[RMDB]
RNA sequence: GGGAACGACUCGAGUAGAGUCGAAAAUUUCGAGUGACCAGCUUAAAUUAUUUAGUAAAUAGUUCACACUAGCAACGCACCUGCGAGGUGAAUUGAUAAAGGAUUGGGGAUUAAUCGCGGUGCAUUUUUCCAGCUUAUCUACAGCUACAUAAGUAUAGCUAAUGGUUUUAUUCGUAAAACCAUUAGCAAAAGAAACAACAACAACAAC
Reactivity to 2A3 in 0.01 (KOAc 150mM, MgCl2 10mM, bicine 150mM(pH8.5), 24C), signal-to-noise 2, nucleotides 027 to 156: u050u070u100c010g000a010g040u030g010a020c000c010a020g020c010u100u070a050a090a140u150u150a160u180u130u060a050g030u080a030a110a240u070a030g040u070u070c040a010c030a050c130u050a030g060c030a090a100c040g000c020a010c000c030u060g000c020g000a020g000g040u030g060a010a010u080u060g080a050u120a100a190a050g060g010a050u030u110g010g000g010g010a010u020u170a060a040u080c020g000c000g010g000u000g000c000a000u060u080u040u010u030c030c000a000g000c010u030u030a020u060c050u020a030c010a060g000c010u040a010c040a080u090a060a080g110u130a090u160a130
Reactivity to DMS in 0.01 (KOAc 150mM, MgCl2 10mM, bicine 150mM(pH8.5), 24C), signal-to-noise 1, nucleotides 027 to 156: u010u000u000c050g000a090g060u000g020a050c030c050a070g020c010u000u020a100a040a080u020u000a090u000u000u000a220g000u010a190a060a150u000a030g030u000u000c020a060c060a060c030u030a060g000c030a060a030c090g000c030a040c000c030u020g010c040g030a090g010g040u000g020a060a050u000u000g050a120u000a040a090a150g030g010a100u010u010g000g000g000g040a210u030u010a070a090u010c080g010c080g030g010u000g000c000a060u000u010u030u000u000c030c010a110g020c040u000u000a050u000c060u000a120c060a120g030c050u010a050c040a050u000a050a070g000u000a170u000a210

Chemical mapping of a 207-nucleotide RNA with 2A3 and DMS. DMS adducts were read by reverse transcription with MarathonRT. Reactivities are given for positions 27 through 156. The data come from the RNA Mapping Database (RMDB), library OK3TST. The 2A3 profile rests on 1,256 reads. The RNA was probed in 150 mM KOAc, 10 mM MgCl2 and 150 mM bicine (pH 8.5) at 24 C.